[RMDB]
RNA sequence: GGGAACGACUCGAGUAGAGUCGAAAAUAGGCCCAAGCAACUGUUUAUCAAAAACACAGCUCUCUGCUAAACCGCAAGGUGAUGUAUAGGGGGUGACGCCUGCCCGGUGCUGGAAGGUUAAGAGGAGUGCUUAGACGUAAGUCGAAGGUAUGAAUUGCGUGUGUUAAAUCUUCGGAUUUAACACACGAAAAGAAACAACAACAACAAC
Reactivity to 2A3 in 0.01 (KOAc 150mM, MgCl2 10mM, bicine 150mM(pH8.5), 24C), signal-to-noise 3, nucleotides 027 to 156: u100a040g070g000c000c010c020a020a020g020c030a010a160c030u020g020u070u110u070a160u140c060a080a140a090a010a000c040a010c000a030g010c000u000c000u000c010u020g030c000u080a170a060a030c000c020g030c070a090a040g000g040u020g030a100u110g040u030a180u140a110g050g010g000g010g020u010g120a020c060g000c000c010u040g010c010c000c010g050g020u030g030c070u030g000g030a050a050g070g000u050u070a060a000g010a020g080g000a000g020u030g020c010u040u030a040g000a040c030g050u120a090a080g010u050c010g010a050a000g020g030u080a060u090g050a100a080u130u170g050
Reactivity to DMS in 0.01 (KOAc 150mM, MgCl2 10mM, bicine 150mM(pH8.5), 24C), signal-to-noise 2, nucleotides 027 to 156: u000a080g020g020c020c010c040a100a140g020c040a060a110c020u000g010u000u000u000a110u000c080a060a070a080a130a070c300a050c030a220g030c030u000c030u000c030u010g050c020u000a050a230a030c020c040g020c150a090a130g000g010u000g000a100u000g040u000a080u000a090g000g010g050g030g070u000g000a040c030g020c030c000u000g020c040c030c020g000g000u010g000c030u010g020g010a050a070g000g010u000u010a030a130g020a100g000g010a130g030u000g000c020u000u000a160g000a050c020g050u000a080a140g080u000c020g000a110a070g020g010u000a040u000g010a110a130u010u000g000